[RMDB]
RNA sequence: GGGAACGACUCGAGUAGAGUCGAAAAGGAACUGCAAGCUAAGUGCCUUGCUCAAGGCCACCAAUUCAGUAUUUCUCCUGCGUAGCCCAGUAUUCUCACUACACAGAUCACACUUCAUUCUUGGGAAGUAUAUGUUUGUCUCCACAGGAUGCAAUAAGCACUACUAAAUCUUCGGAUUUAGUAGUGCAAAAGAAACAACAACAACAAC
Reactivity to 2A3 in 0.01 (KOAc 150mM, MgCl2 10mM, bicine 150mM(pH8.5), 24C), signal-to-noise 5, nucleotides 027 to 156: g050g020a040a030c020u030g000c040a010a030g040c040u110a110a030g050u060g090c000c010u030u090g030c060u070c110a040a010g010g020c040c010a020c020c020a040a070u100u100c030a030g050u060a150u030u110u040c020u020c000c020u010g020c050g040u040a020g000c010c010c010a000g020u020a100u060u100c010u010c030a030c060u100a040c050a010c020a070g040a060u110c040a020c020a010c090u060u050c010a060u050u020c050u110u070g070g000g010a040a040g090u050a080u020a020u170g090u030u070u090g030u030c030u020c030c020a090c030a050g010g040a030u080g030c030a020a060u300a100a160
Reactivity to DMS in 0.01 (KOAc 150mM, MgCl2 10mM, bicine 150mM(pH8.5), 24C), signal-to-noise 2, nucleotides 027 to 156: g010g020a110a140c020u010g020c020a080a100g020c070u010a060a070g030u000g030c040c010u000u010g020c060u000c080a100a070g030g000c000c030a120c020c020a080a090u000u020c060a150g030u000a130u000u010u010c010u000c050c010u000g010c040g040u000a040g010c020c020c000a050g020u000a100u010u000c030u000c020a110c010u000a050c030a050c030a050g000a150u020c110a050c040a040c050u000u000c040a100u000u000c050u000u000g020g000g000a080a060g030u000a080u000a100u010g020u000u000u000g010u000c000u000c010c030a090c090a050g000g010a100u000g010c070a050a080u010a070a300
An RNA of 207 nucleotides, treated with 2A3 and DMS and read out base by base.
The data come from the RNA Mapping Database (RMDB), library OK3TST.
Reactivities are given for positions 27 through 156.
Conditions: 150 mM KOAc, 10 mM MgCl2 and 150 mM bicine (pH 8.5), 24 C.
The 2A3 profile rests on 2,952 reads.